Notes
Structure probing data (DMS and 2A3) for a 170-nucleotide construct. The RNA was probed in 150 mM KOAc, 10 mM MgCl2 and 150 mM bicine (pH 8.5) at 24 C. The DMS profile rests on 15,467 reads. 2A3 adducts were read by reverse transcription with SuperScript II with manganese. DMS adducts were read by reverse transcription with MarathonRT.
RNA sequence: GGGAACGACUCGAGUAGAGUCGAAAAUUUAGUCGGUGUGCUCACACUAGACAACCAGGACCUUAAUGGCAAGUGGUAUGAUUUUGGUGACUUCGUAAUCACUCAACCUGGUUCAGGAGUAGCUAUAGUACCGUGAACUUCGGUUCACGGAAAAGAAACAACAACAACAAC
Reactivity to DMS in 0.01 (KOAc 150mM, MgCl2 10mM, bicine 150mM(pH8.5), 24C), signal-to-noise 4, nucleotides 027 to 129: u050u060u030a130g030u030c020g050g000u020g000u010g030c110u000c070a240c070a040c010u070a120g040a050c080a130a080c000c000a060g000g060a180c110c030u020u070a050a040u070g020g030c190a080a040g040u020g010g030u020a050u020g020a100u030u070u050u030g040g040u000g010a070c040u000u020c080g000u090a000a000u020c050a040c000u030c130a080a100c100c070u000g010g040u030u010c120a100g030g060a170g020u010a030g010c110u070a090u040a090g030u040a060
Reactivity to 2A3 in 0.01 (KOAc 150mM, MgCl2 10mM, bicine 150mM(pH8.5), 24C), signal-to-noise 7, nucleotides 027 to 129: u140u080u070a060g000u020c010g000g020u020g020u020g050c020u040c050a050c010a010c020u060a110g020a030c000a000a000c000c010a030g030g020a070c000c030u100u270a120a040u130g040g020c060a070a030g040u030g020g000u030a020u070g110a100u080u040u100u210g100g020u120g100a030c010u020u010c030g030u020a080a090u070c020a010c030u100c020a020a110c020c010u000g000g000u030u030c030a030g010g040a060g030u060a010g000c020u060a070u030a180g070u050a070